[RMDB]
RNA sequence: GGGAACGACUCGAGUAGAGUCGAAAAUCAGCCUCACACAUGCUUAAAUGGAACCAUUCAAGCAAGCGUUUCUCACAAAAACUAGCUAGUGUACAAGUCCAAAUCUCUAUUAGAAAAGGCACACUUGAAGCCUGGAGUCCUUGGUAGAAUGCAUGCACCUAGGAAAGCGAUUCGUCGCUUUCCUAGGAAAAGAAACAACAACAACAAC
Reactivity to 2A3 in 0.01 (KOAc 150mM, MgCl2 10mM, bicine 150mM(pH8.5), 24C), signal-to-noise 1, nucleotides 027 to 156: u130c000a060g080c020c000u070c000a020c000a000c000a060u160g050c010u050u180a100a020a030u120g040g000a040a080c060c000a040u010u070c040a070a000g000c000a040a000g030c020g070u000u100u000c000u020c000a100c050a030a060a150a030a050c010u040a020g010c010u020a020g040u020g020u050a050c030a000a090g050u000c000c000a010a180a160u020c040u030c000u060a300u200u150a200g040a000a000a000a000g000g000c020a020c020a000c050u000u110g040a080a030g010c010c020u000g050g020a040g030u040c000c030u040u000g050g010u010a010g030a130a020u110g000c000a010u060g030c060a040
Description: Source: RMDB library OK3TST, as collected in RNAgym. The record gives the reactivity of an RNA of 207 nucleotides to 2A3. Values cover nucleotides 27 to 156. The RNA was probed in 150 mM KOAc, 10 mM MgCl2 and 150 mM bicine (pH 8.5) at 24 C.